[RMDB]
RNA sequence: GGGAACGACUCGAGUAGAGUCGAAAAGAUAGCUCGUUCGCGAGCUAUCAAAUAGGCGCAGUGGGCUAGCGCCUCUCAAAAGCCCGAAAGGAAGAGAGAGAAAAAGGUGGUCCUUCGGGACCACCAACAUAACGCUACCCUUCGGGGUAGCGUUAUGAAAAGAAACAACAACAACAAC
Reactivity to DMS in 0.01 (KOAc 150mM, MgCl2 10mM, bicine 150mM(pH8.5), 24C), signal-to-noise 1, nucleotides 027 to 126: g000a000u000a000g020c000u010c000g020u000u010c270g040c010g000a000g020c000u000a000u010c010a000a090a120u000a130g000g010c000g030c010a120g000u000g020g010g030c020u010a030g050c020g020c010c010u020c010u000c010a060a010a030a050g020c000c010c000g010a050a080a140g010g010a040a050g000a100g000a070g000a140g020a050a130a010a120a130g000g010u000g000g010u000c000c000u000u030c190g040g030g020a000c000c000a010c000c000a040a090
Chemical mapping of a 177-nucleotide RNA with DMS. The DMS profile rests on 914 reads. DMS adducts were read by reverse transcription with MarathonRT. The reactions ran in a buffer of 150 mM KOAc, 10 mM MgCl2 and 150 mM bicine (pH 8.5), at 24 C. Values cover nucleotides 27 to 126.